[RMDB]
The record gives the reactivity of an RNA of 177 nucleotides to DMS and 2A3. For 2A3 the reverse transcriptase was SuperScript II with manganese. Source: RMDB library TTRDES, as collected in RNAgym. For DMS, 6,695 sequencing reads were counted. Conditions: 150 mM KOAc, 10 mM MgCl2 and 150 mM bicine (pH 8.5), 24 C.
RNA sequence: GGGAACGACUCGAGUAGAGUCGAAAAGAUAUGGACGAACAAGGGAGAUAAUACUCGGAAACGAGUACUAUCGAAGAACUUGUCGUCCUAAGUCAAAGAAUGAGCUGCACUUCGGUGCAGCUCAUUCCAUGCGGAAUUAGUUCGCUAAUUCCGCAUGAAAAGAAACAACAACAACAAC
Reactivity to DMS in 0.01 (KOAc 150mM, MgCl2 10mM, bicine 150mM(pH8.5), 24C), signal-to-noise 4, nucleotides 027 to 126: g010a010u000a030u010g010g000a000c000g000a090a050c010a010a010g000g020g020a030g010a010u000a010a030u000a000c000u000c000g020g020a010a000a010c000g010a000g010u000a010c050u000a000u010c000g040a110a170g020a220a300c010u010u000g010u000c000g020u000c000c000u000a000a060g000u000c000a120a120a170g000a020a000u000g000a010g010c010u000g010c000a010c000u000u020c220g020g010u000g000c010a000g000c000u000c000a000u000u000c000
Reactivity to 2A3 in 0.01 (KOAc 150mM, MgCl2 10mM, bicine 150mM(pH8.5), 24C), signal-to-noise 2, nucleotides 027 to 126: g000a010u010a000u020g000g000a000c000g030a280a070c010a000a000g000g020g000a140g010a010u010a020a010u010a000c000u000c010g010g010a000a010a000c000g000a010g000u000a020c000u000a010u030c000g140a160a070g000a010a000c000u000u000g000u010c000g000u000c000c000u010a000a010g010u010c020a160a100a080g000a010a000u000g000a010g000c000u010g000c020a020c070u070u230c300g030g010u000g050c030a000g010c010u000c000a000u010u010c010